[RMDB]
RNA sequence: GGGAACGACUCGAGUAGAGUCGAAAACGCGGCGACUUCGGCCCGGAUCUGGGCCCGCAGCUUCUCGGUAGAGGGGUCCAGGUCGAUGUCUACCGGACGCAUACCGGCAGUCGUCGCGGUGUCCACCAUAGUGGGAAGCAUUCGUGCUUCCCACUAUAAAAGAAACAACAACAACAAC
Reactivity to 2A3 in 0.01 (KOAc 150mM, MgCl2 10mM, bicine 150mM(pH8.5), 24C), signal-to-noise 1, nucleotides 027 to 126: c000g020c000g010g010c000g000a010c000u010u020c050g040g000c030c100c020g130g000a000u000c010u030g000g000g000c040c000c060g060c030a060g020c030u240u100c030u040c050g030g040u130a060g040a060g040g010g020g000u050c020c010a000g000g000u010c000g020a030u140g020u020c030u050a110c010c090g080g010a040c050g040c100a030u060a150c010c020g010g030c030a000g000u000c000g000u000c000g000c020g010g000u010g010u030c000c040a060c050c010
Reactivity to DMS in 0.01 (KOAc 150mM, MgCl2 10mM, bicine 150mM(pH8.5), 24C), signal-to-noise 2, nucleotides 027 to 126: c010g000c010g050g010c030g010a020c010u000u000c000g030g000c060c110c160g020g000a020u010c000u000g000g020g000c000c000c000g020c110a230g010c150u010u030c080u010c070g010g010u000a060g000a090g010g020g010g010u000c020c000a020g010g010u000c010g010a070u010g000u000c030u000a130c130c080g000g000a040c070g010c180a110u000a110c000c000g000g000c150a010g020u000c000g020u000c000g000c030g000g010u000g000u000c030c020a180c200c110